[RMDB]
RNA sequence: GGGAACGACUCGAGUAGAGUCGAAAAGGCGCAGGGCCGUGGCGGUAGGCGUACACCUGCUGGCUCAGAAGUCGGUGCUGAGGCGUCGCAAGGGCCCGUGUUACUUCGGCCGUUUCCGGGGUAGGAAGCAUCUCGCGAUCUUCGGGUUGCGAGGUGCAAAAGAAACAACAACAACAAC
Reactivity to DMS in 0.01 (KOAc 150mM, MgCl2 10mM, bicine 150mM(pH8.5), 24C), signal-to-noise 9, nucleotides 027 to 126: g000g010c020g010c100a090g010g000g010c010c010g020u010g000g010c020g010g010u010a050g010g010c050g010u040a080c160a120c020c020u000g020c020u010g010g020c040u010c120a100g010a100a080g010u020c110g010g000u010g020c080u000g000a110g020g000c020g010u010c020g000c050a120a080g010g010g000c010c000c010g000u020g000u020u010a030c050u010u010c120g000g000c050c020g000u000u000u000c010c000g010g010g000g010u030a060g000g010a110a120
Reactivity to 2A3 in 0.01 (KOAc 150mM, MgCl2 10mM, bicine 150mM(pH8.5), 24C), signal-to-noise 9, nucleotides 027 to 126: g040g000c050g010c080a080g010g020g000c010c020g060u050g040g010c020g020g050u050a030g040g030c060g060u080a030c030a030c050c010u020g010c020u030g110g010c020u020c080a070g060a160a010g080u130c030g000g020u060g020c050u050g040a080g100g040c010g010u030c020g010c050a050a090g060g010g000c000c000c000g010u030g020u020u040a060c040u030u040c010g030g000c020c010g020u020u040u000c010c000g020g010g000g000u080a060g030g090a100a030
Chemical mapping of a 177-nucleotide RNA with DMS and 2A3. The reactions ran in a buffer of 150 mM KOAc, 10 mM MgCl2 and 150 mM bicine (pH 8.5), at 24 C. Reactivities are given for positions 27 through 126.